[RMDB]
RNA sequence: GGGAACGACUCGAGUAGAGUCGAAAAGGUAGAGCCUCGACAAGUAAUCAAUUUGUUAAAACGGGUGAGCGGUAACGCUAUGAAGCUCCGGGGACGGAGUGAGCGUGGAUGGCCUUAUUUGGAGCAUAUGUAUGGUGAAGUUCGCUUCACCAUACAUAAAAGAAACAACAACAACAAC
Reactivity to DMS in 0.01 (KOAc 150mM, MgCl2 10mM, bicine 150mM(pH8.5), 24C), signal-to-noise 4, nucleotides 027 to 126: g000g020u010a050g010a150g010c030c020u000c040g010a040c030a040a040g010u010a100a090u030c150a090a050u010u010u020g010u010u010a020a050a090a090c120g010g000g010u010g010a090g020c030g000g010u010a060a050c020g000c020u000a080u030g000a100a220g010c000u010c010c010g000g000g010g000a230c070g020g000a030g000u010g020a020g000c010g020u010g000g010a050u010g000g000c020c010u000u010a060u010u000u010g000g000a090g000c090a100u010
Reactivity to 2A3 in 0.01 (KOAc 150mM, MgCl2 10mM, bicine 150mM(pH8.5), 24C), signal-to-noise 6, nucleotides 027 to 126: g030g020u050a020g010a020g080c000c010u030c040g030a020c040a050a030g060u130a120a110u120c100a080a120u090u070u070g080u070u120a060a100a030a040c040g000g020g010u070g010a020g020c030g000g030u050a020a020c010g010c000u050a170u280g040a050a010g000c000u010c010c000g000g000g060g020a030c020g000g000a020g010u060g010a010g000c010g000u020g010g040a070u100g030g020c010c000u070u090a130u100u090u090g060g030a050g030c010a030u000

The record gives the reactivity of an RNA of 177 nucleotides to DMS and 2A3. The reactions ran in a buffer of 150 mM KOAc, 10 mM MgCl2 and 150 mM bicine (pH 8.5), at 24 C. For DMS the reverse transcriptase was MarathonRT.